RNA sequence: GGGAACGACUCGAGUAGAGUCGAAAAGUCGGCGGUGCGCUUGACGGCCCAGUCCAGCCCGCCAUUGCCGAGCAGCCAGUCGAGCUGUUCGGCCAGCAGCACCAGGGUGGCGAUCGCCGGAGUGUUGCAUAAAUUUACCCUUCGGGGUAAAUUUAUGAAAAGAAACAACAACAACAAC
Reactivity to 2A3 in 0.01 (KOAc 150mM, MgCl2 10mM, bicine 150mM(pH8.5), 24C), signal-to-noise 6, nucleotides 027 to 126: g210u090c060g000g000c000g010g030u130g070c140g020c040u020u020g000a010c010g060g030c010c020c000a000g000u000c000c020a000g000c010c000c000g000c000c010a030u030u130g000c000c000g000a000g000c000a000g000c010c020a100g240u270c100g090a060g030c000u000g010u000u010c000g000g010c010c000a010g000c000a010g000c000a010c010c010a050g090g090g040u040g040g040c090g060a130u300c050g010c020c000g000g010a100g010u030g000u020u020g000
Reactivity to DMS in 0.01 (KOAc 150mM, MgCl2 10mM, bicine 150mM(pH8.5), 24C), signal-to-noise 8, nucleotides 027 to 126: g010u010c090g000g010c000g010g010u080g010c160g010c060u010u020g000a020c020g020g010c010c020c030a210g000u010c030c100a040g000c040c030c010g000c010c010a110u030u030g000c000c000g000a010g000c000a000g010c010c020a300g020u040c280g000a140g000c000u000g010u000u000c000g000g010c000c130a020g000c030a030g020c000a010c020c060a250g000g000g020u010g000g010c180g010a130u030c030g010c000c000g000g020a180g000u000g000u000u000g010